[RMDB]
RNA sequence: GGGAACGACUCGAGUAGAGUCGAAAAAAGAAUUUGUGAGCAAAAACCUGACUAGUGCGAUCAACAAGAACAAAUGUGACAUUGCUGAUCUGAAGAUGGCUGUCAGCUUCAGUCAAUUCAACAGAAGCGUUGGAAUAGGAUUCGUCCUAUUCCAACGAAAAGAAACAACAACAACAAC
Reactivity to 2A3 in 0.01 (KOAc 150mM, MgCl2 10mM, bicine 150mM(pH8.5), 24C), signal-to-noise 3, nucleotides 027 to 126: a000a000g080a050a040u170u130u210g040u070g030a060g020c030a050a080a070a090a130c020c010u030g060a040c020u060a020g070u030g100c010g030a040u020c000a030a060c040a050a050g060a080a010c040a110a130a110u220g030u030g040a030c050a120u050u080g000c020u030g000a040u020c020u060g020a030a020g070a100u160g070g000c050u050g040u060c070a020g020c000u050u010c010a010g060u040c010a000a050u060u060c010a030a030c000a070g100a160a030g030
Reactivity to DMS in 0.01 (KOAc 150mM, MgCl2 10mM, bicine 150mM(pH8.5), 24C), signal-to-noise 4, nucleotides 027 to 126: a060a080g000a070a060u010u000u000g010u010g000a110g010c050a050a050a080a110a050c100c040u010g000a100c090u020a060g040u000g010c080g010a110u000c050a030a050c070a030a050g000a080a060c100a030a060a090u010g010u000g010a090c160a090u000u000g000c040u010g000a040u000c030u010g010a050a100g010a090u010g020g010c040u010g010u000c090a070g020c090u000u010c030a040g000u000c030a030a060u000u010c070a060a080c030a030g010a080a100g020